[RMDB]
RNA sequence: GGGAACGACUCGAGUAGAGUCGAAAAACACAUUGAAUAUCGAAACAUUUAAUUGCGCUAAAUCGUUUCAUUAAAUAAAUUACCUUGUAUUGGCGAUUAAAUUAAGGUAAAUUAUAAAAAAUGCUGAUCCACUUAGCUAUUUCGAUAGCUAAGUGGAAAAAGAAACAACAACAACAAC
Reactivity to DMS in 0.01 (KOAc 150mM, MgCl2 10mM, bicine 150mM(pH8.5), 24C), signal-to-noise 1, nucleotides 027 to 126: a030c050a090c100a140u020u030g000a130a030u010a040u050c150g000a050a010a030c040a070u020u000u000a020a100u000u060g000c100g000c120u000a020a020a010u030c170g040u010u010u000c000a160u100u000a060a060a040u000a000a000a040u000u000a030c010c000u000u000g000u000a010u000u030g000g000c140g010a080u000u010a050a030a040u010u010a010a000g020g000u000a000a020a010u000u030a010u040a000a000a110a030a000a030u000g000c090u030g000a300
Reactivity to 2A3 in 0.01 (KOAc 150mM, MgCl2 10mM, bicine 150mM(pH8.5), 24C), signal-to-noise 3, nucleotides 027 to 126: a000c060a000c030a060u050u150g060a130a030u110a070u260c090g000a010a000a000c020a010u000u020u070a120a120u160u210g010c040g010c040u040a020a030a060u080c050g030u010u020u020c020a010u020u160a140a140a020u110a030a010a010u020u000a030c000c000u010u020g140u090a100u010u060g110g020c120g070a030u070u190a080a030a030u040u070a020a020g020g000u000a030a000a040u130u050a060u090a050a150a000a010a000a000u070g010c020u020g030a030